Conditions: 150 mM KOAc, 10 mM MgCl2 and 150 mM bicine (pH 8.5), 24 C. This 170-nucleotide RNA was probed chemically with DMS and 2A3. 2A3 adducts were read by reverse transcription with SuperScript II with manganese. The 2A3 profile rests on 1,666 reads.

RNA sequence: GGGAACGACUCGAGUAGAGUCGAAAAGUGUCUUUUGAUUAUCUUAUUAGGGAGGCUAAGACUAGAGUUUUAGUCGUCGUUAAUUCCCAAGAUGUCUAUAAGAGUCUUACCAUAGUUGACAUUCCACGCAGGAAGGCGUUCGCGCCUUCCAAAAGAAACAACAACAACAAC
Reactivity to DMS in 0.01 (KOAc 150mM, MgCl2 10mM, bicine 150mM(pH8.5), 24C), signal-to-noise 1, nucleotides 027 to 129: g000u010g020u000c030u010u000u000u120g020a070u000u000a010u060c020u010u050a070u050u000a070g000g010g030a120g000g000c000u010a170a000g010a080c060u040a160g010a300g000u000u040u000u000a070g060u050c030g000u160c070g090u000u020a000a000u020u080c030c000c000a180a060g110a060u040g000u010c000u020a060u030a100a150g020a050g000u070c000u010u060a200c000c060a000u020a040g000u090u000g000a070c060a060u000u000c040c000a050c050g000c060a070
Reactivity to 2A3 in 0.01 (KOAc 150mM, MgCl2 10mM, bicine 150mM(pH8.5), 24C), signal-to-noise 1, nucleotides 027 to 129: g000u020g000u000c090u000u150u030u000g120a070u020u200a030u130c000u040u040a110u140u020a080g000g000g000a020g000g000c190u040a020a000g000a000c050u150a050g000a120g120u000u000u000u000a010g000u000c000g030u000c030g050u030u040a010a020u170u000c000c000c000a000a000g100a000u300g000u000c000u020a070u000a090a030g010a000g110u000c000u010u040a090c000c000a010u080a000g040u140u000g020a000c000a000u030u010c020c000a020c160g000c010a000